An RNA of 177 nucleotides, treated with 2A3 and DMS and read out base by base.
[RMDB]
RNA sequence: GGGAACGACUCGAGUAGAGUCGAAAAGCAAGAUGCUUCGGCAUCUUGCAGUCGUAGCGCGAUCGUCAGAAUUACAGCUAUGUCGAACGAGGAAGAGCGCGCACAUCAUCCCUUUCGAGGGAUGAAAUUCGCUACGUAAUUUCGAUUACGUAGCGAAAAAAGAAACAACAACAACAAC
Reactivity to 2A3 in 0.01 (KOAc 150mM, MgCl2 10mM, bicine 150mM(pH8.5), 24C), signal-to-noise 2, nucleotides 027 to 126: g010c000a010a000g020a010u010g000c000u050u080c230g090g010c010a000u000c000u000u000g020c000a010g010u040c050g070u080a080g000c000g000c060g000a010u010c000g010u010c020a030g060a090a040u140u100a150c060a080g090c090u160a130u300g150u060c040g020a050a010c010g010a020g040g010a050a000g070a050g230c000g000c000g000c020a000c000a030u010c000a000u000c000c000c030u000u030u010c180g080a030g000g000g000a000u000g010a000a000a000
Reactivity to DMS in 0.01 (KOAc 150mM, MgCl2 10mM, bicine 150mM(pH8.5), 24C), signal-to-noise 3, nucleotides 027 to 126: g020c000a000a000g000a020u000g000c000u000u020c130g010g010c010a000u000c020u000u000g010c000a020g010u020c080g010u010a070g020c000g020c060g000a010u000c020g030u010c080a080g010a130a090u010u000a130c160a110g010c180u000a090u010g010u010c110g000a120a030c030g000a110g000g000a020a020g000a080g040c000g010c000g020c040a080c160a160u000c000a010u000c000c000c000u000u000u010c180g000a020g010g010g010a000u000g000a020a040a100
2A3 adducts were read by reverse transcription with SuperScript II with manganese. The RNA was probed in 150 mM KOAc, 10 mM MgCl2 and 150 mM bicine (pH 8.5) at 24 C. Reactivities are given for positions 27 through 126.